[RMDB]
RNA sequence: GGGAACGACUCGAGUAGAGUCGAAAACCCCCACUUCGGUGGGGGAAAAAAGAUAUGGAAGCUCUCCCCACCCUCGUUGUAGCUAAGACAGUCGGAAACGAUCGAGCUAUUACGAGGAGGAGCUUCCUAAGUCAAAAAAGAUGGCUUCGGCCAUCAACAUUCAAGAAAGCUUCGGCUUUCUUGAAUGAAAAGAAACAACAACAACAAC
Reactivity to 2A3 in 0.01 (KOAc 150mM, MgCl2 10mM, bicine 150mM(pH8.5), 24C), signal-to-noise 1, nucleotides 027 to 156: c020c020c000c000c010a000c000u060u140c300g090g000u020g000g000g000g000g000a040a080a060a080a020a040g090a050u170a070u110g010g000a000a000g000c080u020c010u100c000c050c000c000a030c000c010c000u030c000g010u010u040g010u010a010g000c000u010a050a120g040a130c070a060g070u010c020g070g060a070a140a090c030g030a020u200c060g020a020g000c000u000a000u010u020a000c010g000a010g000g000a000g000g000a000g000c010u000u010c000c000u010a040a000g030u070c020a110a110a000a150a000a020g040a010u050g000g020c040u060u080c300g120g000c010c000a000u000c000a000a000
An RNA of 207 nucleotides, treated with 2A3 and read out base by base. It was measured as part of the RMDB library RNAMAK. The 2A3 profile rests on 928 reads. The RNA was probed in 150 mM KOAc, 10 mM MgCl2 and 150 mM bicine (pH 8.5) at 24 C. Values cover nucleotides 27 to 156.